RNA sequence: GGGAACGACUCGAGUAGAGUCGAAAAUCCACUAUGAAUCUAGUCACUAAAUAAACACAAUUAGCUACUGUGUGUAACAGUGAGUGUUGAUAACACAAAAUAAUAGUAUAGUUUUGGAAGAUUAUACGCGCCCUUGCUCCGUUCGCGGAGCAAGGAAGUACAGUCUUAAGUUCGCUUAAGACUGUACAAAAGAAACAACAACAACAAC
Reactivity to DMS in 0.01 (KOAc 150mM, MgCl2 10mM, bicine 150mM(pH8.5), 24C), signal-to-noise 3, nucleotides 027 to 156: u000c010c010a110c140u000a110u020g010a170a080u010c040u020a130g010u000c050a070c040u010a080a080a140u010a080a080a040c010a030c000a090a080u000u000a190g030c130u000a060c040u000g020u020g000u000g020u000a110a170c150a020g000u000g010a100g020u000g020u000u000g010a100u000a100a180c050a110c050a050a030a070a080u010a080a300u000a070g000u000a040u000a020g000u000u000u000u000g020g010a210a150g000a030u000u000a000u000a030c000g000c100g000c110c000c000u000u000g010c000u000c000c020g030u000u000c290g020c020g020g000a000g030c010a000a000g010g010a000a030
Reactivity to 2A3 in 0.01 (KOAc 150mM, MgCl2 10mM, bicine 150mM(pH8.5), 24C), signal-to-noise 9, nucleotides 027 to 156: u020c020c010a050c060u160a140u260g130a120a040u060c100u100a040g090u050c020a010c030u070a100a070a300u140a090a170a010c030a010c020a050a110u120u080a090g040c050u120a060c030u020g000u000g000u010g050u090a050a000c010a040g010u010g040a040g020u020g020u030u050g060a130u150a210a020c030a010c030a040a090a050a080u230a090a080u070a110g020u010a010u000a030g020u010u030u100u180g090g050a080a050g010a060u040u000a010u020a020c020g040c010g040c050c000c000u000u000g000c000u000c010c000g020u020u020c100g000c010g090g000a000g010c000a000a000g000g000a000a000